[RMDB]
RNA sequence: GGGAACGACUCGAGUAGAGUCGAAAAAUUGAUGCGAAGGGGGGACGGAGAAGGCUAUGAUGGCCGGGCGACGGUUGUCCCGGUUUAAGCGUGUAGGCUGGUUUUCCAGGCAAAUCCGGAAAUUGAAUAGUAACGUACUGUUCGCAGUACGUUACUAAAAAGAAACAACAACAACAAC
Reactivity to DMS in 0.01 (KOAc 150mM, MgCl2 10mM, bicine 150mM(pH8.5), 24C), signal-to-noise 2, nucleotides 027 to 126: a080u000u000g030a060u000g030c030g010a070a130g000g000g000g000g000g000a110c050g040g000a080g000a110a090g000g010c020u000a070u000g010a120u000g000g010c000c000g010g000g010c300g010a090c120g000g000u020u010g000u010c010c000c010g000g010u000u000u000a080a070g000c060g020u000g010u010a070g000g000c010u000g000g000u000u010u000u000c010c020a130g000g000c090a030a060a080u000c020c030g000g000a040a030a100u010u020g000a110a120
This 177-nucleotide RNA was probed chemically with DMS.